[RMDB]
RNA sequence: GGGAACGACUCGAGUAGAGUCGAAAAGCGGAAAUGAGUGCGUGGUAGCACAAACCAUACCAAUCCGCGGCACAAGGUCGCACAUGCACAGCUUCGCCUGUGCAAAGCGAACAAGGCGAAUAAAGAACGACUGGUAUGACUUCGGUCAUACCAGUCGAAAAGAAACAACAACAACAAC
Reactivity to DMS in 0.01 (KOAc 150mM, MgCl2 10mM, bicine 150mM(pH8.5), 24C), signal-to-noise 1, nucleotides 027 to 126: g000c040g000g050a120a040a000u090g060a170g070u000g030c160g010u000g040g000u000a000g150c280a300c070a000a280a150c000c090a000u000a000c240c250a000a230u000c050c000g000c000g000g000c000a000c000a000a000g000g000u000c000g000c010a000c160a140u030g000c000a000c000a000g000c000u010u000c280g000c170c000u020g010u020g060c000a000a050a000g000c000g000a030a110c000a090a120g000g210c000g000a300a120u110a080a000a020g000a140a020
Reactivity to 2A3 in 0.01 (KOAc 150mM, MgCl2 10mM, bicine 150mM(pH8.5), 24C), signal-to-noise 1, nucleotides 027 to 126: g010c000g080g040a020a000a120u140g080a110g010u140g010c160g090u070g070g140u290a020g060c040a000c010a040a220a000c000c000a030u030a050c000c050a000a020u030c000c000g000c000g030g030c010a020c050a300a090g040g040u000c000g040c010a040c000a100u000g000c000a000c000a000g000c000u050u240c170g060c000c000u000g000u030g000c010a000a000a000g000c000g000a000a000c040a030a030g000g050c040g000a000a090u270a170a040a110g040a070a020
Conditions: 150 mM KOAc, 10 mM MgCl2 and 150 mM bicine (pH 8.5), 24 C. The record gives the reactivity of an RNA of 177 nucleotides to DMS and 2A3. For DMS, 889 sequencing reads were counted. Reactivities are given for positions 27 through 126. For 2A3 the reverse transcriptase was SuperScript II with manganese.